[RMDB]
RNA sequence: GGGAACGACUCGAGUAGAGUCGAAAACUGUCCAAGAAGCAGGAAGAGGAAGCGAAUGCACAAUCUGGAAGUGGUGGACCCAUCUAUAGGGACCCUCCCGAAGACCAGAGGAGCAGAAGGUCCCGUAGAGUAUCACCAGUUUCGACUGGUGAUACUCAAAAGAAACAACAACAACAAC
Reactivity to 2A3 in 0.01 (KOAc 150mM, MgCl2 10mM, bicine 150mM(pH8.5), 24C), signal-to-noise 2, nucleotides 027 to 126: c010u060g070u030c000c020a080a030g060a030a020g040c000a000g070g020a060a100g070a050g090g020a070a020g120c030g070a090a030u050g000c030a050c080a060a060u050c020u040g010g020a040a050g050u090g070g000u010g040g010a030c030c000c010a030u060c090u090a160u200a090g000g010g030a030c040c050c030u060c020c010c000g080a100a000g040a070c020c030a010g030a080g020g000a030g000c020a010g050a080a020g010g020u010c000c000c010g000u060a040
Reactivity to DMS in 0.01 (KOAc 150mM, MgCl2 10mM, bicine 150mM(pH8.5), 24C), signal-to-noise 2, nucleotides 027 to 126: c080u000g040u000c030c070a080a080g010a070a100g020c040a030g090g010a130a030g020a170g020g000a140a070g010c110g010a160a110u000g010c070a020c130a240a110u000c050u000g010g010a110a040g020u000g010g020u000g000g030a140c020c020c010a080u000c110u030a110u020a110g000g000g000a030c050c010c020u000c020c010c010g000a060a080g000a070c080c040a040g020a070g000g000a140g020c220a080g010a080a090g000g020u000c000c000c040g010u010a090

Notes: Structure probing data (2A3 and DMS) for a 177-nucleotide construct. The RNA was probed in 150 mM KOAc, 10 mM MgCl2 and 150 mM bicine (pH 8.5) at 24 C. For 2A3, 1,587 sequencing reads were counted. Source: RMDB library OK2TRN, as collected in RNAgym. For 2A3 the reverse transcriptase was SuperScript II with manganese.